[RMDB]
RNA sequence: GGGAACGACUCGAGUAGAGUCGAAAAGAUAUGGAACAUCGACAAAUCUGUCCUGAGACAUGAGGCUACAUCGGAAACGAUGUAACCUCAACAGCUCAGGGACAGAUUUGUCGAUGUUCCUAAGUCAUCCUUGCAAUACGUUCGCGUAUUGCAAGGAAAAAGAAACAACAACAACAAC
Reactivity to DMS in 0.01 (KOAc 150mM, MgCl2 10mM, bicine 150mM(pH8.5), 24C), signal-to-noise 1, nucleotides 027 to 126: g010a060u010a300u010g000g000a030a000c020a000u000c000g010a000c000a000a000a020u000c000u000g000u000c000c010u020g000a040g010a090c070a250u000g000a030g010g000c020u000a010c000a000u000c020g020g000a100a110a290c030g010a000u000g030u000a000a010c000c000u000c000a000a000c260a180g030c000u000c000a050g020g000g020a000c000a000g000a010u000u000u000g000u000c000g000a010u000g000u000u000c000c000u000a000a030g010u050c030a170